[RMDB]
RNA sequence: GGGAACGACUCGAGUAGAGUCGAAAACGGCAACUAGCACAGCAUAACUCAUAGAAUCAGACACACCAACCUCCUUAGUUUUGUGCAGGAUACCAUGAAAAAAGUUAACAUUGGAAACGUACCAAAGCCCUACCUAUUAGUUCGCUAAUAGGUAGGGAAAAGAAACAACAACAACAAC
Reactivity to 2A3 in 0.01 (KOAc 150mM, MgCl2 10mM, bicine 150mM(pH8.5), 24C), signal-to-noise 3, nucleotides 027 to 126: c010g010g000c020a030a020c040u040a020g010c010a020c040a040g040c010a050u040a100a050c010u040c060a050u020a140g080a030a040u090c020a020g020a040c010a010c000a000c060c030a000a110c030c020u050c020c020u020u040a050g040u040u060u040u080g060u020g000c000a010g060g020a020u050a080c010c020a030u100g040a050a110a000a050a000a000g070u120u070a060a020c040a070u050u060g010g010a060a070a050c030g020u040a050c030c030a020a050a060g060
Reactivity to DMS in 0.01 (KOAc 150mM, MgCl2 10mM, bicine 150mM(pH8.5), 24C), signal-to-noise 4, nucleotides 027 to 126: c100g000g020c030a040a080c040u000a070g030c030a060c060a050g010c050a040u000a070a090c110u010c070a070u000a060g000a060a050u000c080a050g000a100c080a050c030a020c040c050a050a090c050c050u010c040c030u000u000a070g010u000u000u020u010g010u000g010c070a070g000g000a100u000a060c040c020a050u000g000a000a040a050a090a050a090g020u010u010a050a040c080a060u000u010g000g010a070a050a060c130g010u000a100c050c040a060a090a140g000